About this RNA: The data come from the RNA Mapping Database (RMDB), libraries RFM100 and RFMREP. Chemical mapping of a 177-nucleotide RNA with 2A3 and DMS. The RNA was probed in 150 mM KOAc, 10 mM MgCl2 and 150 mM bicine (pH 8.5) at 24 C.
RNA sequence: GGGAACGACUCGAGUAGAGUCGAAAAGGCCGUUUCGUUCCGUUCGGCGGCUAAUUUUUGGGGGAGGAGGCGCGAAACCGCCCCCAAAAAACCGCUUUCGCGGGACGGCUCCGGCAUGGAUGGCCGGGCAUUCAUUCAUUUUCGAAUGAAUGAAUGCAAAAGAAACAACAACAACAAC
Reactivity to 2A3 in 0.01 (KOAc 150mM, MgCl2 10mM, bicine 150mM(pH8.5), 24C), signal-to-noise 5, nucleotides 027 to 126: g050g010c010c010g010u010u020u070c030g010u060u050c030c020g020u040u060c070g010g000c020g020g010c080u080a080a150u000u000u000u000u000g010g010g030g010g000a040g080g110a100g060g040c080g020c050g180a080a050a030c000c010g010c000c000c000c000c000a000a000a000a010a000a030c000c000g000c000u020u030u050c030g000c000g010g000g000a000c000g000g000c010u000c000c000g000g010c030a040u170g160g060a070u130g060g010c000c000g000g010
Reactivity to DMS in 0.01 (KOAc 150mM, MgCl2 10mM, bicine 150mM(pH8.5), 24C), signal-to-noise 5, nucleotides 027 to 126: g020g010c000c000g010u010u010u010c010g010u000u020c080c040g020u010u010c300g010g000c010g000g010c130u040a030a030u000u000u000u000u000g010g010g010g000g010a030g010g000a100g010g010c090g000c190g000a040a110a130c010c010g010c000c000c000c000c000a000a000a000a010a010a030c000c000g010c000u000u010u000c140g000c000g000g000g000a000c000g000g000c120u010c020c010g000g000c020a080u010g000g010a120u010g010g000c000c010g000g010